[RMDB]
RNA sequence: GGGAACGACUCGAGUAGAGUCGAAAAGCCGCGGCAAGUGGAGUUAGCGAGAAGAGACUAGGCUUUGGUUUCUUCAAGUGAAGCGGUCACCAAUCAGGUGUGGUACUUACCGUAAAAAAUCCGGAUUAAUGCCUCAGCGCGUUCGCGCGCUGAGGAACUAUACUUCUUUGUUCGCAAAGAAGUAUAGAAAAGAAACAACAACAACAAC
Reactivity to 2A3 in 0.01 (KOAc 150mM, MgCl2 10mM, bicine 150mM(pH8.5), 24C), signal-to-noise 3, nucleotides 027 to 156: g030c010c010g000c000g010g020c050a100a080g040u070g040g060a080g040u220u080a030g020c010g010a040g000a040a000g000a000g000a010c020u040a060g120g240c000u210u210u130g030g000u000u010u000c000u000u010c000a030a030g010u030g040a040a010g000c010g030g050u060c010a010c020c010a030a110u210c100a050g000g070u030g010u060g060g040u050a040c030u050u080a030c000c010g020u060a090a100a000a050a030a080u050c050c010g000g050a080u120u180a130a070u180g050c010c000u000c000a010g000c000g000c000g040u040u070c140g020c000g000c030g000c080u000g000a000g000g000a000a000
Reactivity to DMS in 0.01 (KOAc 150mM, MgCl2 10mM, bicine 150mM(pH8.5), 24C), signal-to-noise 2, nucleotides 027 to 156: g000c050c080g030c050g010g020c010a020a040g010u010g010g000a210g020u010u000a300g000c050g000a300g000a070a070g000a030g010a020c010u010a110g030g000c160u000u000u000g030g010u000u010u000c000u000u000c010a040a300g000u000g010a150a220g020c000g020g010u010c050a070c020c000a110a120u020c120a120g000g010u010g020u000g000g010u000a050c020u000u000a040c000c010g000u000a030a040a110a090a080a090u000c040c010g010g000a270u010u000a050a080u020g000c000c000u040c010a010g000c000g090c000g030u010u020c250g030c020g000c000g010c010u030g000a000g030g010a000a040